Chemical mapping of a 177-nucleotide RNA with 2A3 and DMS. Reactivities are given for positions 27 through 126. The 2A3 profile rests on 61,091 reads. Values are in units of 0.01, from 0 to 300, in steps of 10. For DMS the reverse transcriptase was MarathonRT. For DMS, 126,988 sequencing reads were counted.

[RMDB]
RNA sequence: GGGAACGACUCGAGUAGAGUCGAAAACUAUGUACAGACAGUACAGUGGAUAAGGUCUGUAGAUAUCCAACUUAAACAAUGGUACUUGCAGUGGUAUCUAUCAAGAUAGGCAGGCUAUCAUAGAAAGAGGAUGUUUAUUAUUCGUAGUAGGCAUCUUAAAAGAAACAACAACAACAAC
Reactivity to 2A3 in 0.01 (KOAc 150mM, MgCl2 10mM, bicine 150mM(pH8.5), 24C), signal-to-noise 9, nucleotides 027 to 126: c010u010a020u050g090u000a000c000a020g040a010c010a010g050u080a030c010a070g090u120g140g030a160u040a090a030g050g010u000c000u000g000u000a010g020a020u020a010u010c020c000a040a050c080u080u090a050a030a010c050a050a060u030g010g010u020a010c000u010u020g010c010a050g040u070g120g050u090a010u000c000u010a160u090c080a070a010g010a030u010a010g040g010c010a000g020g000c040u010a010u020c010a020u020a040g120a050a090a000g090
Reactivity to DMS in 0.01 (KOAc 150mM, MgCl2 10mM, bicine 150mM(pH8.5), 24C), signal-to-noise 9, nucleotides 027 to 126: c160u000a020u010g000u000a010c010a030g000a030c040a060g020u010a030c050a290g020u040g010g010a130u010a040a050g010g010u000c010u000g010u000a010g000a020u000a010u010c020c030a110a120c130u020u020a070a100a110c150a080a030u000g000g010u000a030c010u000u000g010c030a120g010u030g020g020u010a010u000c000u000a090u060c240a090a030g000a020u000a030g010g010c020a020g000g010c200u000a010u000c010a020u000a080g010a070a060a060g000